[RMDB]
RNA sequence: GGGAACGACUCGAGUAGAGUCGAAAAGCUGGUUUGGCGGGAAGCGGACCUGCGAACUGGUAUUAUUGUUGGGUUCGUAACUCAAUAAAUUACCCUAGCGCUUAAAAACACUCACCUCCCGCAACCAUCCGUUAAUAAUCUUCGGAUUAUUAACGGAAAAAGAAACAACAACAACAAC
Reactivity to 2A3 in 0.01 (KOAc 150mM, MgCl2 10mM, bicine 150mM(pH8.5), 24C), signal-to-noise 2, nucleotides 027 to 126: g020c030u030g000g050u070u070u150g150g000c020g000g000g000a010a050g040c050g030g030a060c010c030u020g000c000g000a100a060c080u030g000g000u040a040u110u040a190u040u060g000u000u000g020g000g010u030u060c150g080u170a010a000c000u000c010a000a000u030a010a050a010u070u010a020c000c010c020u030a040g050c010g010c020u070u080a090a090a090a050a000c050a040c030u040c010a050c000c010u010c030c000c010g000c000a000a010c010c000a060
Reactivity to DMS in 0.01 (KOAc 150mM, MgCl2 10mM, bicine 150mM(pH8.5), 24C), signal-to-noise 3, nucleotides 027 to 126: g040c230u000g000g010u000u000u010g010g040c010g020g000g010a030a040g010c080g000g010a080c100c070u000g010c010g020a070a150c150u000g000g000u010a010u000u000a090u000u000g000u000u000g000g000g010u000u010c300g000u020a150a040c000u000c010a010a020u010a020a010a150u000u000a020c030c000c100u000a080g000c060g010c030u000u010a030a040a110a110a080c110a080c150u000c020a070c030c200u010c000c000c000g030c000a030a010c020c020a110
Overview
The data come from the RNA Mapping Database (RMDB), library RFMREP. This 177-nucleotide RNA was probed chemically with 2A3 and DMS. DMS adducts were read by reverse transcription with MarathonRT. The RNA was probed in 150 mM KOAc, 10 mM MgCl2 and 150 mM bicine (pH 8.5) at 24 C. Values cover nucleotides 27 to 126.